[RMDB]
RNA sequence: GGGAACGACUCGAGUAGAGUCGAAAACGUCACGAAUGUGCCGAAUUUGUGUUGCAUGGUCGGGUUGAUGCGAAUGAGCGUGAAUCAUCCGUAGGGCUGAGUAAAAGCCGGCAAGGUGAUACCAAAGAUCAAUUACCUAAUUCGUUAGGUAAUUGAUAAAAGAAACAACAACAACAAC
Reactivity to DMS in 0.01 (KOAc 150mM, MgCl2 10mM, bicine 150mM(pH8.5), 24C), signal-to-noise 9, nucleotides 027 to 126: c110g010u000c030a040c040g010a090a070u010g020u010g010c030c030g010a110a110u000u000u000g010u010g010u000u000g020c040a070u000g010g010u000c040g010g000g010u000u000g010a090u000g010c050g010a090a080u010g010a080g010c080g020u010g010a110a070u000c020a020u000c010c020g020u000a180g010g000g010c020u000g000a140g010u010a060a070a100a080g010c050c010g010g010c110a100a080g010g010u000g000a060u000a140c050c040a070a090a110g000
Reactivity to 2A3 in 0.01 (KOAc 150mM, MgCl2 10mM, bicine 150mM(pH8.5), 24C), signal-to-noise 6, nucleotides 027 to 126: c030g020u020c010a010c060g130a260a100u190g020u080g080c010c020g040a060a070u070u080u080g120u030g040u120u160g030c070a060u080g050g050u060c020g030g020g000u040u070g040a040u060g030c030g040a090a150u150g030a070g080c050g020u060g080a050a040u020c010a010u000c020c010g020u040a050g020g100g000c020u020g010a010g030u070a020a120a020a020g040c040c000g010g000c020a030a030g050g000u020g010a020u050a060c020c020a060a060a030g100

Chemical mapping of a 177-nucleotide RNA with DMS and 2A3. DMS adducts were read by reverse transcription with MarathonRT. Reactivities are given for positions 27 through 126. The reactions ran in a buffer of 150 mM KOAc, 10 mM MgCl2 and 150 mM bicine (pH 8.5), at 24 C. 2A3 adducts were read by reverse transcription with SuperScript II with manganese. The data come from the RNA Mapping Database (RMDB), library OK2TRN.